[RMDB]
RNA sequence: GGGAACGACUCGAGUAGAGUCGAAAAUCGUGAGAUGUGGUGCCUCACGCGCUCGAGGCGUCCGUGGUCAGAGAGACCACUGACGCAAAAACUCGAGCGCAAAUAAAACGCAUUACAUAUAGAAUAAAAAUAAUAUCGCAUUCGUGCGAUAUUAUUUAAAAGAAACAACAACAACAAC
Reactivity to 2A3 in 0.01 (KOAc 150mM, MgCl2 10mM, bicine 150mM(pH8.5), 24C), signal-to-noise 2, nucleotides 027 to 126: u150c030g010u030g020a020g000a070u270g030u020g030g010u000g000c010c000u010c010a020c060g000c000g000c000u000c010g000a000g000g020c000g000u000c000c010g000u000g000g000u010c030a050g100a030g020a020g000a300c000c000a000c000u000g000a000c000g000c000a000a160a080a000a000c000u000c000g000a000g000c000g000c000a000a010a000u080a000a030a010a000c030g010c000a000u010u030a010c000a000u190a010u120a100g140a110a140u170a180a160
Reactivity to DMS in 0.01 (KOAc 150mM, MgCl2 10mM, bicine 150mM(pH8.5), 24C), signal-to-noise 3, nucleotides 027 to 126: u020c060g020u030g000a020g000a090u020g010u000g000g000u000g000c000c010u020c030a020c050g000c010g000c030u000c020g020a000g010g030c010g010u000c000c100g040u010g040g000u010c000a130g010a220g020a280g030a010c000c010a010c010u010g000a010c000g020c050a030a040a070a130a290c000u000c000g000a000g010c010g000c020a000a020a050u030a040a050a090a110c210g000c000a020u010u010a010c020a060u050a090u020a180g030a100a090u080a020a070
The data come from the RNA Mapping Database (RMDB), library OK1LIB. The record gives the reactivity of an RNA of 177 nucleotides to 2A3 and DMS. The RNA was probed in 150 mM KOAc, 10 mM MgCl2 and 150 mM bicine (pH 8.5) at 24 C. Reactivities are given for positions 27 through 126. The 2A3 profile rests on 2,415 reads.